[RMDB]
An RNA of 207 nucleotides, treated with 2A3 and DMS and read out base by base. The data come from the RNA Mapping Database (RMDB), library RNAMAK.
RNA sequence: GGGAACGACUCGAGUAGAGUCGAAAAUCAGGUCUUCGGACCUGAAUUGAGCGUACUACCUCGAAAGCCGACGAUCAUAUGGACCCGAAUGUCCCAAAUAGGACAUUCGCCAUAUGGGAGGCUUGAGGUAUCGCCUUGAGAUAGCUUCGGCUAUCAAACCACAACCUUCAUUCGUGAAGGUUGUGGUAAAAGAAACAACAACAACAAC
Reactivity to 2A3 in 0.01 (KOAc 150mM, MgCl2 10mM, bicine 150mM(pH8.5), 24C), signal-to-noise 3, nucleotides 027 to 156: u020c000a020g000g010u000c010u050u240c300g190g000a000c000c000u000g020a000a020u030u110g030a040g020c030g020u040a160c050u010a000c020c020u090c100g270a200a070a040g000c020c020g120a300c020g000a030u020c000a000u010a000u010g020g020a120c120c070c050g000a010a000u000g010u010c010c000c010a170a300a110u220a090g000g000a000c000a010u000u000c000g000c000c000a000u030a000u000g000g000g000a010g020g000c000u000u040g000a000g000g000u000a020u120c000g000c000c000u120u220g110a180g000a020u000a000g000c000u030u040c210g070g000c070u070a010u100c000a050a030
Reactivity to DMS in 0.01 (KOAc 150mM, MgCl2 10mM, bicine 150mM(pH8.5), 24C), signal-to-noise 1, nucleotides 027 to 156: u010c000a010g000g020u000c000u000u020c300g070g010a010c000c000u000g000a020a020u000u030g030a030g030c010g030u000a040c100u000a040c020c010u010c010g030a190a070a020g030c010c000g040a110c170g000a090u030c020a020u010a000u000g010g000a080c170c150c130g010a020a030u010g010u000c000c000c050a040a170a250u000a060g000g010a050c000a040u000u000c020g030c000c010a000u000a010u000g000g000g000a020g020g020c000u010u000g020a000g010g000u000a000u000c010g010c000c000u000u000g010a140g010a010u010a000g010c010u010u020c300g020g060c000u000a030u000c000a020a130
Notes:
For 2A3, 2,085 sequencing reads were counted. The DMS profile rests on 2,974 reads. The reactions ran in a buffer of 150 mM KOAc, 10 mM MgCl2 and 150 mM bicine (pH 8.5), at 24 C. In probing experiments dimethyl sulfate is read out at A N1 and C N3, which are open when not base-paired.